Background:
This 207-nucleotide RNA was probed chemically with 2A3. 2A3 adducts were read by reverse transcription with SuperScript II with manganese. It was measured as part of the RMDB library OK3TST. Conditions: 150 mM KOAc, 10 mM MgCl2 and 150 mM bicine (pH 8.5), 24 C.
RNA sequence: GGGAACGACUCGAGUAGAGUCGAAAACAGCGAUAGACCUUCUGGAAUUCGAUGAUCUGGCUGAUCUGUCGGUCGGGGAUCAUGCGGGCCACUACAGCCUCCACCACACACAACUUGCCGCUUGCACGGUCGAACCCGCCUACCAAGCAGGCGCUAGCCGUGCUUGCAUCUUCGGAUGCAAGCACGGAAAAGAAACAACAACAACAAC
Reactivity to 2A3 in 0.01 (KOAc 150mM, MgCl2 10mM, bicine 150mM(pH8.5), 24C), signal-to-noise 2, nucleotides 027 to 156: c010a020g060c020g040a040u110a080g030a100c010c030u060u050c050u110g080g100a080a090u160u070c080g070a090u080g060a020u060c020u090g090g020c060u030g040a040u050c050u100g210u200c080g010g070u060c030g030g000g000g010a040u050c000a050u130g100c010g000g000g030c080c050a040c070u160a060c050a040g010c010c020u000c010c020a050c070c000a010c000a020c000a000c010a080a090c030u050u150g020c070c060g000c030u030u000g000c030a030c050g000g040u010c000g020a050a050c000c010c020g020c000c010u000a030c010c000a080a030g020c040a030g030g010c020g020c000u000a010g040